[RMDB]
RNA sequence: GGGAACGACUCGAGUAGAGUCGAAAAAAGACCGAUCGAUCUUAAAACUCUAGAUCACCCAUCGAGUGCACAAGAUUACUGAUACAAGAGCUCAACUUGCGAUCGCAAUUGGUCAAAGUAAAGCGAGGACGAUCAUAAGUUUCGACUUAUGAUCGUCAAAAGAAACAACAACAACAAC
Reactivity to 2A3 in 0.01 (KOAc 150mM, MgCl2 10mM, bicine 150mM(pH8.5), 24C), signal-to-noise 3, nucleotides 027 to 126: a000a000g020a000c020c010g000a040u100c010g000a000u000c010u040u060a000a010a050a130c010u050c020u030a050g010a110u030c040a150c070c010c000a050u070c040g050a050g060u100g020c050a010c010a120a050g020a100u070u090a060c030u060g000a000u040a130c040a090a050g000a010g040c010u010c120a010a100c030u040u060g050c050g010a010u020c010g000c060a060a120u030u060g010g000u010c030a030a010a000g140u130a060a050a040g060c110g030a040g120
Reactivity to DMS in 0.01 (KOAc 150mM, MgCl2 10mM, bicine 150mM(pH8.5), 24C), signal-to-noise 3, nucleotides 027 to 126: a090a090g020a060c010c000g000a030u000c050g010a050u000c010u020u000a070a090a130a080c030u010c010u010a080g000a040u000c030a150c030c050c060a260u000c110g000a030g000u000g000c080a100c100a050a030g020a050u000u000a070c150u010g000a020u010a040c050a050a030g000a040g020c040u000c120a080a060c070u000u000g010c140g010a020u000c010g020c100a120a060u000u000g000g020u000c030a090a080a080g000u010a040a080a100g030c140g000a070g010